[RMDB]
RNA sequence: GGGAACGACUCGAGUAGAGUCGAAAAGAUAUGGAUCACCCAAGCAACAGCUCCGGAUCGGAAACGAUCCAGGAGACAUGCUUGCGGUGAUCCUAAGUCAAAAGGUGACACUGUUCGCAGUGUCACCCCGCUUCCUAAUGUUCGCAUUAGGAAGCGGAAAAGAAACAACAACAACAAC
Reactivity to DMS in 0.01 (KOAc 150mM, MgCl2 10mM, bicine 150mM(pH8.5), 24C), signal-to-noise 1, nucleotides 027 to 126: g010a010u000a060u010g000g000a000u010c000a000c000c000c000a010a010g030c000a220a130c210a240g000c000u000c000c000g000g000a000u000c000g010g000a010a000a080c000g040a020u000c000c000a050g040g010a010g010a000c110a200u020g030c000u000u000g000c240g000g000u000g000a000u000c000c000u010a010a050g000u010c040a120a070a120a090g020g010u000g000a000c000a010c010u000g000u000u010c160g030c020a010g010u010g000u000c000a000c000c030
Reactivity to 2A3 in 0.01 (KOAc 150mM, MgCl2 10mM, bicine 150mM(pH8.5), 24C), signal-to-noise 1, nucleotides 027 to 126: g010a010u020a000u050g010g000a030u010c020a000c000c030c000a000a000g020c030a030a160c090a260g000c010u000c000c010g010g030a020u040c000g030g000a020a010a010c000g010a010u000c050c030a030g020g010a010g000a000c020a150u300g010c000u000u020g000c160g030g000u040g000a000u000c010c000u000a010a000g000u000c000a000a000a070a200g020g000u030g000a000c010a030c020u020g060u090u060c300g030c180a020g000u060g030u040c000a000c000c000
This 177-nucleotide RNA was probed chemically with DMS and 2A3. DMS adducts were read by reverse transcription with MarathonRT. DMS (dimethyl sulfate) methylates the pairing face of unpaired adenines and cytosines. Source: RMDB library TTRDES, as collected in RNAgym.